[RMDB]
RNA sequence: GGGAACGACUCGAGUAGAGUCGAAAACGGAAAACAGUGAGUGGACGGAAGAAAUCCCCUUCCCACCUCCCCACUGUCCACUCACUGUCUUCCUAAGAGGAAAUAUAAAUCGGGGGUGGGAAGGGGAGCUGCCCUCACUGUUCGCAGUGAGGGCAGCAAAAGAAACAACAACAACAAC
Reactivity to 2A3 in 0.01 (KOAc 150mM, MgCl2 10mM, bicine 150mM(pH8.5), 24C), signal-to-noise 2, nucleotides 027 to 126: c010g030g000a020a040a000a000c000a010g000u000g000a000g000u000g000g000a000c000g060g000a060a010g010a030a220a080u160c000c000c000c000u000u020c000c000c000a000c000c000u030c070c070c040c070a120c020u030g010u000c000c000a000c000u000c000a000c000u010g000u000c010u000u000c000c000u020a050a030g030a020g180g230a010a130a000u190a030u040a030a170a020u240c090g000g010g000g000g000u000g010g000g000a000a000g000g000g000g000a000
Conditions: 150 mM KOAc, 10 mM MgCl2 and 150 mM bicine (pH 8.5), 24 C. An RNA of 177 nucleotides, treated with 2A3 and read out base by base. Values cover nucleotides 27 to 126. For 2A3, 1,068 sequencing reads were counted. The data come from the RNA Mapping Database (RMDB), library OK1LIB.